[RMDB]
An RNA of 177 nucleotides, treated with 2A3 and DMS and read out base by base. The RNA was probed in 150 mM KOAc, 10 mM MgCl2 and 150 mM bicine (pH 8.5) at 24 C. The DMS profile rests on 1,211 reads. The 2A3 profile rests on 2,272 reads. The data come from the RNA Mapping Database (RMDB), library M2PK50.
RNA sequence: GGGAACGACUCGAGUAGAGUCGAAAAGGGAUAUUGUUCGCAAUAUCCCAAAAGGAACCAGGCACGGUGCCUGAGAACUGAAUAGCUAAAACGGAAGCUAAAAAACCACGGAGUUCGCUCCGUGGAAGACUAGGAAGUACUUCGGUACUUCCUAGUCAAAAGAAACAACAACAACAAC
Reactivity to 2A3 in 0.01 (KOAc 150mM, MgCl2 10mM, bicine 150mM(pH8.5), 24C), signal-to-noise 2, nucleotides 027 to 126: g000g000g000a020u000a010u010u010g020u010u080c140g030c090a000a000u000a000u010c030c010c000a000a000a000a000g000g000a030a000c010c000a000g000g020c010a030c290g290g100u240g020c000c000u030g010a070g010a090a030c050u040g030a120a030u020a060g020c010u110a030a020a000a160c090g150g000a040a020g010c020u060a160a210a020a020a000a020c010c010a000c020g010g010a010g030u090u130c180g100c050u000c000c020g000u010g000g000a000a010
Reactivity to DMS in 0.01 (KOAc 150mM, MgCl2 10mM, bicine 150mM(pH8.5), 24C), signal-to-noise 2, nucleotides 027 to 126: g010g000g000a050u000a010u010u000g010u000u000c170g020c000a020a010u000a030u020c000c010c000a030a010a060a070g000g000a120a250c070c010a010g010g010c050a150c220g020g030u000g030c010c010u000g010a050g010a140a230c040u000g010a050a130u000a020g000c030u010a030a060a060a130c300g000g020a070a060g000c010u000a010a100a060a040a100a120c000c000a000c000g000g000a010g010u000u010c210g000c000u000c000c010g040u000g000g000a010a000